[RMDB]
RNA sequence: GGGAACGACUCGAGUAGAGUCGAAAAGAGUUGAAACAAACUUUAAAAACGAUGUUCAUUCAUAUGAAAGAAACUGUUCAUACACAAGGUCUACUGGAGAUUUGUGACAGAAUUAUUGACCAAUAUGGACUACGUCCACAUUCGUGUGGACGUAGUCAAAAGAAACAACAACAACAAC
Reactivity to 2A3 in 0.01 (KOAc 150mM, MgCl2 10mM, bicine 150mM(pH8.5), 24C), signal-to-noise 1, nucleotides 027 to 126: g010a000g010u030u030g070a090a020a000c050a000a050a070c000u110u140u240a060a150a020a000a020c050g000a010u060g040u060u000c100a060u130u000c040a020u060a020u250g040a060a060a000g110a030a160a050c060u040g040u010u000c000a050u160a120c000a010c010a150a000g000g000u000c000u050a080c120u120g160g020a100g030a090u040u050u240g020u030g040a060c100a040g020a030a080u210u050a020u030u160g000a010c040c000a050a030u140a120u070g030
Reactivity to DMS in 0.01 (KOAc 150mM, MgCl2 10mM, bicine 150mM(pH8.5), 24C), signal-to-noise 1, nucleotides 027 to 126: g000a050g000u000u000g000a050a070a120c110a180a180a040c040u010u010u000a030a130a040a250a080c090g030a040u050g030u000u000c010a050u000u010c180a090u000a040u000g000a040a060a060g000a060a040a040c110u010g000u030u000c000a130u000a040c170a000c130a080a060g000g000u040c010u050a050c160u050g000g000a090g000a040u000u000u000g070u000g000a090c170a060g000a040a010u000u000a090u000u000g000a030c130c090a050a190u000a040u000g000
Structure probing data (2A3 and DMS) for a 177-nucleotide construct. It was measured as part of the RMDB library OK2TRN. For DMS, 518 sequencing reads were counted.